Conditions: 150 mM KOAc, 10 mM MgCl2 and 150 mM bicine (pH 8.5), 24 C. An RNA of 177 nucleotides, treated with DMS and 2A3 and read out base by base.

RNA sequence: GGGAACGACUCGAGUAGAGUCGAAAAAUGGGUUUCUGUAGUUGAGCCAUUGCGGUGGAUUCGACCUAGCCCAGAAUGUCCUGCAGUUGAUGCACUGAUGGAGAAUGUGGAAGGUGCUCUGCGUGCACACUUGCUUCCAUUUCGAUGGAAGCAAGUGAAAAGAAACAACAACAACAAC
Reactivity to DMS in 0.01 (KOAc 150mM, MgCl2 10mM, bicine 150mM(pH8.5), 24C), signal-to-noise 3, nucleotides 027 to 126: a110u010g000g010g010u000u000u010c140u000g000u010a090g010u000u000g000a050g010c020c020a020u000u010g040c170g060g000u000g010g010a120u000u000c010g020a020c030c030u000a080g000c000c000c000a030g010a080a080u010g010u000c000c000u000g020c090a130g010u010u010g000a120u010g020c030a040c030u010g010a110u010g010g010a060g000a090a090u000g010u000g010g020a090a120g020g010u000g000c000u010c020u000g010c040g000u000g010c060a130
Reactivity to 2A3 in 0.01 (KOAc 150mM, MgCl2 10mM, bicine 150mM(pH8.5), 24C), signal-to-noise 6, nucleotides 027 to 126: a000u040g000g000g020u060u130u180c130u160g170u190a140g020u030u020g010a000g000c010c020a020u020u080g080c270g050g000u020g000g090a300u020u010c010g000a000c000c020u020a000g000c000c000c000a010g050a040a100u120g030u040c000c010u030g030c020a030g000u040u070g040a100u070g010c010a000c030u100g040a220u110g060g050a070g040a110a160u250g060u120g140g100a040a030g060g020u040g020c010u020c000u020g020c030g050u030g020c030a010
Source information:
High DMS reactivity at an A or C suggests that its Watson-Crick edge is free. 2A3 adducts were read by reverse transcription with SuperScript II with manganese. For 2A3, 5,709 sequencing reads were counted.